RNA sequence: GGGAACGACUCGAGUAGAGUCGAAAAGCAGCGAACGAGGGGGUGGACCUCGCUGCCGUCGCCUUCGGUGACGAAGCGGCCGGGCUGACCGACGAACUGGGAGAGUACGGCGUCGACGAACUCCACCUAAUUUACCACCGUUCGCGGUGGUAAAUUAAAAAGAAACAACAACAACAAC
Reactivity to 2A3 in 0.01 (KOAc 150mM, MgCl2 10mM, bicine 150mM(pH8.5), 24C), signal-to-noise 1, nucleotides 027 to 126: g000c010a010g010c020g030a060a050c070g000a030g110g000g010g020g000u020g000g000a030c010c000u000c030g000c000u030g010c000c000g000u000c000g000c000c000u020u030c010g050g020u030g030a050c010g000a030a000g040c050g170g000c040c000g000g000g030c020u030g070a130c010c020g050a070c040g100a230a080c100u110g000g030g020a240g010a010g120u070a020c020g010g000c040g050u060c010g010a020c000g030a060a050c060u000c020c000a010c010c010
Reactivity to DMS in 0.01 (KOAc 150mM, MgCl2 10mM, bicine 150mM(pH8.5), 24C), signal-to-noise 3, nucleotides 027 to 126: g010c010a040g010c290g020a070a150c220g000a010g000g010g010g000g010u010g000g000a040c020c010u000c070g010c000u000g020c030c000g000u000c010g000c300c000u010u000c060g010g020u010g000a170c020g000a050a010g000c150g020g000c000c020g000g000g000c050u010g000a240c020c000g000a110c170g010a080a090c130u030g020g020g000a170g010a050g020u000a070c020g020g010c000g030u010c000g000a010c020g000a080a070c180u000c010c000a010c000c050